[RMDB]
RNA sequence: GGGAACGACUCGAGUAGAGUCGAAAAUUCAAGCGAUUCGUCGCUUGAACCUGAGGAGACUCAAGCAAAAAUGUUCCCUUUUGCUUUUGCUUUCCUCUUUUAAGUAGUAGUGCUUCGGCACUACUAACAUCCUUCCUUCUUUCGAGAAGGAAGGAUGAAAAGAAACAACAACAACAAC
Reactivity to 2A3 in 0.01 (KOAc 150mM, MgCl2 10mM, bicine 150mM(pH8.5), 24C), signal-to-noise 2, nucleotides 027 to 126: u020u010c000a000a000g000c000g020a000u030u120c200g040u020c000g140c010u000u000g000a010a000c010c010u010g000a000g000g000a010g010a020c010u000c030a010a010g010c010a000a010a020a060a180u230g000u010u040c000c000c000u010u000u000u000g000c010u010u000u010u010g020c030u000u000u000c000c000u000c000u120u030u040u080a100a020g000u020a000g000u000a000g000u000g000c010u030u050c190g090g000c010a000c000u000a000c000u000a000a000
Reactivity to DMS in 0.01 (KOAc 150mM, MgCl2 10mM, bicine 150mM(pH8.5), 24C), signal-to-noise 3, nucleotides 027 to 126: u000u000c000a010a010g000c000g010a030u000u010c200g030u000c010g030c000u000u000g000a010a050c020c000u000g000a010g010g010a020g010a020c000u000c040a010a010g010c010a000a010a010a030a140u020g000u000u000c010c000c000u000u000u000u000g010c000u000u000u010u000g000c180u010u000u000c000c010u000c000u000u000u010u010a080a150g010u000a000g010u000a000g010u000g000c000u000u010c210g030g010c010a010c000u000a010c000u000a020a140
About this RNA
Source: RMDB library M2PK50, as collected in RNAgym. An RNA of 177 nucleotides, treated with 2A3 and DMS and read out base by base. For DMS, 5,618 sequencing reads were counted. DMS adducts were read by reverse transcription with MarathonRT. The reactions ran in a buffer of 150 mM KOAc, 10 mM MgCl2 and 150 mM bicine (pH 8.5), at 24 C.